[RMDB]
An RNA of 207 nucleotides, treated with 2A3 and DMS and read out base by base.
It was measured as part of the RMDB library OK3TST.
DMS adducts were read by reverse transcription with MarathonRT.
In probing experiments dimethyl sulfate is read out at A N1 and C N3, which are open when not base-paired.
For DMS, 2,167 sequencing reads were counted.
Conditions: 150 mM KOAc, 10 mM MgCl2 and 150 mM bicine (pH 8.5), 24 C.
RNA sequence: GGGAACGACUCGAGUAGAGUCGAAAAAAGCAUACCUUCAAUUCAGGGAACUAAGUCUCCGAUCAUUUGUUCUUGCUCAUGCAUCUGGAGGACAUCUAGGGACCACCUGAUCUAGGCUGGGCUCAGAGUGGCUUGGCUCCAAGCUGCAGGAUGGGUGAGCCCAGCCGAGAUUCGUCUCGGCUGGGCUAAAAGAAACAACAACAACAAC
Reactivity to 2A3 in 0.01 (KOAc 150mM, MgCl2 10mM, bicine 150mM(pH8.5), 24C), signal-to-noise 3, nucleotides 027 to 156: a000a000g140c100a100u080a070c000c010u020u070c030a050a070u070u060c010a020g070g010g010a050a080c010u060a070a090g040u030c020u000c040c010g020a050u030c010a030u020u020u100g060u140u060c060u160u210g020c000u020c030a020u080g030c030a050u050c060u140g050g010a020g010g040a040c000a050u050c070u100a070g060g040g030a090c010c010a030c000c030u090g020a120u020c040u080a050g040g000c020u000g010g010g020c010u020c040a090g040a030g160u040g000g000c030u010u000g040g000c040u070c100c010a070a030g000c010u030g030c020a020g040g080a060u060g030g040g010u050g000
Reactivity to DMS in 0.01 (KOAc 150mM, MgCl2 10mM, bicine 150mM(pH8.5), 24C), signal-to-noise 1, nucleotides 027 to 156: a040a080g020c020a070u000a100c030c000u000u000c010a100a110u000u010c090a090g020g010g010a030a080c030u000a060a100g000u000c010u000c030c020g000a090u000c000a080u000u040u000g010u010u000c100u010u000g010c040u010c080a100u000g030c070a040u010c010u000g020g020a080g020g000a030c100a010u020c060u010a150g000g010g000a030c000c040a050c030c010u000g000a100u010c050u000a030g030g020c100u010g040g000g020c010u020c030a090g020a170g020u010g030g010c020u000u010g020g050c080u010c080c010a050a130g010c030u010g000c000a130g000g010a140u010g020g020g050u000g000